Chemical mapping of a 177-nucleotide RNA with 2A3 and DMS. The 2A3 profile rests on 2,011 reads. For DMS, 2,741 sequencing reads were counted.

RNA sequence: GGGAACGACUCGAGUAGAGUCGAAAAAGGAGUCCUUUCGAGGACUCCUACUAGUGGCGCCGACCACUUAAUAACAACGGCCAAACAAAAAUGUCAGCAAAAAACGCCUAGCUUUCGAGCUAGGCAACAUCUAUGAACAGUUCGCUGUUCAUAGAUGAAAAGAAACAACAACAACAAC
Reactivity to 2A3 in 0.01 (KOAc 150mM, MgCl2 10mM, bicine 150mM(pH8.5), 24C), signal-to-noise 2, nucleotides 027 to 126: a060g020g010a020g000u000c010c000u000u030u080c160g090a000g000g000a000c000u000c000c000u000a000c000u000a010g010u000g000g030c060g000c050c010g190a300c000c060a000c000u030u140a180a080u050a120a040c110a020a010c020g000g000c050c030a000a180a090c030a070a110a060a040a040u160g070u240c090a050g070c080a150a120a050a010a050a070c110g000c000c000u000a000g000c000u200u030u130c260g060a000g000c010u000a000g040g010c010a000a000
Reactivity to DMS in 0.01 (KOAc 150mM, MgCl2 10mM, bicine 150mM(pH8.5), 24C), signal-to-noise 3, nucleotides 027 to 126: a180g000g000a030g000u000c000c000u000u000u000c150g020a010g000g000a000c000u010c000c000u000a010c020u000a020g020u000g000g000c030g010c000c000g000a130c010c000a000c000u010u010a050a050u000a030a020c170a020a100c020g000g010c020c300a070a080a090c100a020a030a100a080a050u000g010u010c070a070g010c130a010a020a060a050a080a100c220g010c000c000u010a000g010c010u000u000u010c110g010a010g010c010u000a000g010g000c000a000a030
The reactions ran in a buffer of 150 mM KOAc, 10 mM MgCl2 and 150 mM bicine (pH 8.5), at 24 C.